[RMDB]
Notes
This 177-nucleotide RNA was probed chemically with 2A3. For 2A3 the reverse transcriptase was SuperScript II with manganese. As a SHAPE reagent, 2A3 marks flexible, mostly unpaired nucleotides at the ribose 2'-OH. The 2A3 profile rests on 279 reads. Source: RMDB library OK1LIB, as collected in RNAgym.
RNA sequence: GGGAACGACUCGAGUAGAGUCGAAAAUAUUGGGAAUAUCUGCUAUUUGCUUCGCUAUUAUUCAAUAAAGGUGUUUAUCAUUAUUGAUGUGCAUCGCGAAAAUGGCCACUUUGGAAAUGAACUAAAAGAGGAUUUUAGUCUUCGGACUAAAAUCCUCAAAAGAAACAACAACAACAAC
Reactivity to 2A3 in 0.01 (KOAc 150mM, MgCl2 10mM, bicine 150mM(pH8.5), 24C), signal-to-noise 1, nucleotides 027 to 126: u270a010u070u080g210g000g000a070a050u110a010u070c080u000g000c000u000a170u110u050u110g030c010u010u010c060g000c000u000a000u030u000a000u030u050c010a110a130u010a080a080a000g040g000u080g040u000u300u290a040u140c060a000u000u150a070u000u270g030a070u080g000u060g030c070a040u000c070g060c000g000a020a020a020a020u000g030g040c000c000a080c070u040u000u040g030g010a030a080a000u110g000a040a210c040u180a080a000a000a170